Record summary: An RNA of 170 nucleotides, treated with 2A3 and DMS and read out base by base. For DMS the reverse transcriptase was MarathonRT. The DMS profile rests on 18,379 reads. Source: RMDB library 15KLIB, as collected in RNAgym. High DMS reactivity at an A or C suggests that its Watson-Crick edge is free.

[RMDB]
RNA sequence: GGGAACGACUCGAGUAGAGUCGAAAACGGCUCCCUUCCAGAAGGGCGGGGGUGGCCUGGAGCGUCGGGCCCCAGCAGUCCGUGGAAUUCACCCUCUUACCGCUUCUCCACACUCCUUCCCCCCUGCGUAGAUCACGCUUCGGCGUGAUCAAAAGAAACAACAACAACAAC
Reactivity to 2A3 in 0.01 (KOAc 150mM, MgCl2 10mM, bicine 150mM(pH8.5), 24C), signal-to-noise 5, nucleotides 027 to 129: c030g040g000c030u020c030c000c040u010u050c060c020a090g040a170a120g080g010g000c010g000g000g000g000g010u060g050g030c030c020u040g020g030a070g050c040g090u110c010g010g010g020c000c020c010c000a030g040c020a030g020u000c020c010g020u060g010g050a040a020u070u070c020a120c010c000c000u010c000u060u050a070c010c030g010c020u060u010c020u000c020c000a020c010a040c030u000c000c000u000u090c000c010c000c000c000c000u040g020c050g020u030a050
Reactivity to DMS in 0.01 (KOAc 150mM, MgCl2 10mM, bicine 150mM(pH8.5), 24C), signal-to-noise 6, nucleotides 027 to 129: c120g000g000c050u010c010c030c050u020u020c060c040a130g030a170a130g040g020g040c080g010g020g060g010g070u040g020g020c070c010u020g000g010a120g020c090g030u020c060g010g000g040c030c010c030c010a110g000c060a120g010u040c040c050g010u040g010g020a130a120u050u060c070a110c060c020c040u010c020u000u050a120c110c040g020c050u050u010c020u020c010c040a110c020a020c030u030c020c040u010u040c000c000c000c000c000c000u040g010c000g010u080a100